Chemical mapping of a 207-nucleotide RNA with 2A3. Conditions: 150 mM KOAc, 10 mM MgCl2 and 150 mM bicine (pH 8.5), 24 C. Source: RMDB library OK3TST, as collected in RNAgym.
RNA sequence: GGGAACGACUCGAGUAGAGUCGAAAAGCUAGUCGGUGACGACUAGCAGCCACGACUAAGGUCGUGGGAAGAUGCUCACAAACUGGUGAGUGGCAUCAAUAACUACAUCAUCACCAGAAACCGGAUUAACGGAUAACAUUAAAAUUUAAGAUGUAGGCGUCCACGGUAGUUUCGACUACCGUGGACGAAAAGAAACAACAACAACAAC
Reactivity to 2A3 in 0.01 (KOAc 150mM, MgCl2 10mM, bicine 150mM(pH8.5), 24C), signal-to-noise 1, nucleotides 027 to 156: g000c000u000a000g000u000c000g000g000u040g010a080c030g010a000c000u000a000g010c000a020g020c000c000a000c000g000a000c000u060a170a110g260g000u030c000g030u000g030g000g050a060a010g020a040u000g000c000u200c220a000c030a000a220a130c070u000g030g020u000g000a030g000u040g010g000c010a030u030c000a030a030u090a110a000c000u000a020c000a000u020c000a020u000c000a000c000c000a000g010a110a000a000c000c020g000g050a120u300u290a070a050c000g060g010a010u120a070a090c090a060u110u270a010a050a120a120u220u190u140a030a000g000a000u010g000u040a000g180g020